[RMDB]
RNA sequence: GGGAACGACUCGAGUAGAGUCGAAAAGCUCACACAGAUUAGAAGGUGCAUUUGGUUACCAAGACCUAUUACCAGAAAAAUAUGAUUUUAUUCUUCUUGGUCACUAUCAUAGAAGACAAUAUUUAAACAAUAACCCUAAUCAUAUGUAUGGUGGUUCAUCUGCACAAAAGUUCGCUUUUGUGCAGAUAAAAGAAACAACAACAACAAC
Reactivity to 2A3 in 0.01 (KOAc 150mM, MgCl2 10mM, bicine 150mM(pH8.5), 24C), signal-to-noise 3, nucleotides 027 to 156: g010c030u050c070a000c000a020c000a020g060a090u030u180a070g060a200a050g020g000u030g020c060a070u030u030u160g010g010u030u030a030c000c000a050a010g030a070c000c040u070a080u140u090a080c010c030a020g120a040a100a020a030a020u080a030u090g010a050u010u040u140u130a140u130u030c000u010u010c000u000u010g010g010u010c010a010c090u080a030u100c030a060u080a150g030a120a000g090a060c000a030a050u070a090u170u190u210a090a120a020c030a060a080u070a080a030c000c010c010u020a060a010u000c010a030u060a050u130g040u030a070u070g010g020u020g020g030u040u040c010
Reactivity to DMS in 0.01 (KOAc 150mM, MgCl2 10mM, bicine 150mM(pH8.5), 24C), signal-to-noise 1, nucleotides 027 to 156: g010c050u000c140a110c070a070c000a190g060a170u010u000a050g000a090a050g030g000u020g020c070a130u010u000u010g070g000u000u000a160c050c030a060a040g020a050c040c040u000a070u000u020a040c010c020a120g000a070a050a100a180a080u000a050u000g000a100u010u000u020u010a050u010u000c010u000u000c010u000u010g040g010u010c120a070c130u000a060u020c030a060u000a070g020a060a060g000a080c090a090a100u000a150u000u000u010a050a090a110c050a020a040u000a060a060c040c000c030u010a020a020u000c050a010u010a010u000g000u000a070u010g000g010u000g000g030u010u010c050